[RMDB]
This 207-nucleotide RNA was probed chemically with DMS and 2A3.
Conditions: 150 mM KOAc, 10 mM MgCl2 and 150 mM bicine (pH 8.5), 24 C.
2A3 adducts were read by reverse transcription with SuperScript II with manganese.
Source: RMDB library M2RFPK, as collected in RNAgym.

RNA sequence: GGGAACGACUCGAGUAGAGUCGAAAACUCUUAUCGAGAGCGGCAGAGGGACUGGCCCGAUGAAGCCCGGCAACCUAACUUUAUUUAAGAGUAAAGUGAAGGUGCUAAUUCCAGCAAAAUGGUGUAUAAACGACCGUUAACUUCGGUUAACGGUCAACAUCAGGAUAUUGUUCGCAAUAUCCUGAUGAAAAGAAACAACAACAACAAC
Reactivity to DMS in 0.01 (KOAc 150mM, MgCl2 10mM, bicine 150mM(pH8.5), 24C), signal-to-noise 2, nucleotides 027 to 156: c010u000c010u000u000a260u000c030g000a000g020a140g040c050g000g000c040a100g010a170g010g010g000a090c030u000g020g010c000c000c010g000a060u020g010a160a150g000c020c020c030g060g020c000a040a030c010c000u000a150a010c000u000u000u000a010u000u010u010a140a230g000a300g000u000a000a030a050g010u000g020a120a020g010g000u000g020c040u000a060a180u000u000c000c010a090g000c080a060a090a100a180u000g000g030u000g020u000a120u020a070a110a200c090g010a010c010c000g030u000u000a000a000c000u000u000c300g030g010u000u000a000a000c000g020g010u000c000a000a070
Reactivity to 2A3 in 0.01 (KOAc 150mM, MgCl2 10mM, bicine 150mM(pH8.5), 24C), signal-to-noise 2, nucleotides 027 to 156: c000u000c010u070u100a200u130c020g010a020g010a020g040c130g040g000c040a010g010a030g020g000g010a020c040u010g020g040c000c000c010g080a100u010g000a000a020g000c000c000c000g000g000c030a090a100c010c010u020a010a010c010u000u020u020a050u130u130u110a200a110g110a010g060u000a010a010a000g000u010g090a110a030g000g000u000g000c000u010a010a040u100u020c010c010a000g050c110a030a060a040a150u200g090g000u020g050u100a110u210a130a190a020c140g000a000c000c000g000u000u000a000a000c000u020u070c210g040g000u000u000a000a000c020g000g010u000c000a000a000